Structure probing data (2A3 and DMS) for a 177-nucleotide construct. Conditions: 150 mM KOAc, 10 mM MgCl2 and 150 mM bicine (pH 8.5), 24 C. For DMS, 2,858 sequencing reads were counted. The data come from the RNA Mapping Database (RMDB), library RFMREP.
[RMDB]
RNA sequence: GGGAACGACUCGAGUAGAGUCGAAAAAAACCGAACAUCCGGGGGUAACUCCGGAUGGAUGUGGUGUUGUAGGACCCUGCCUAAUGCCGUGGAACGAAGCCGAAGUGGUCUGGAACGGCCCGCCGUAGAGUAGUUAUAGGUUCGCCUAUAACUACUCAAAAGAAACAACAACAACAAC
Reactivity to 2A3 in 0.01 (KOAc 150mM, MgCl2 10mM, bicine 150mM(pH8.5), 24C), signal-to-noise 1, nucleotides 027 to 126: a000a000a000c000c000g010a000a000c000a000u010c000c010g010g010g000g020g020u010a080a120c000u010c000c000g000g000a000u000g000g010a010u080g080u140g000g040u060g000u030u170g100u030a030g040g020a060c010c000c020u040g000c030c000u150a140a030u080g000c070c030g020u030g010g030a080a040c060g010a080a040g020c030c030g000a110a040g050u060g020g020u010c050u060g040g030a060a050c020g070g000c010c010c010g030c010c010g020u040a050
Reactivity to DMS in 0.01 (KOAc 150mM, MgCl2 10mM, bicine 150mM(pH8.5), 24C), signal-to-noise 3, nucleotides 027 to 126: a060a100a030c020c000g000a130a150c010a010u000c010c010g000g000g000g000g000u020a090a120c000u000c020c000g010g010a000u000g010g010a020u020g040u020g010g010u010g020u000u000g000u000a080g000g000a090c030c000c040u000g030c010c040u020a070a080u000g010c040c020g010u000g000g010a090a080c070g010a090a090g000c050c060g020a110a050g010u000g020g020u000c040u000g010g000a130a080c080g000g000c030c030c030g020c050c080g020u000a100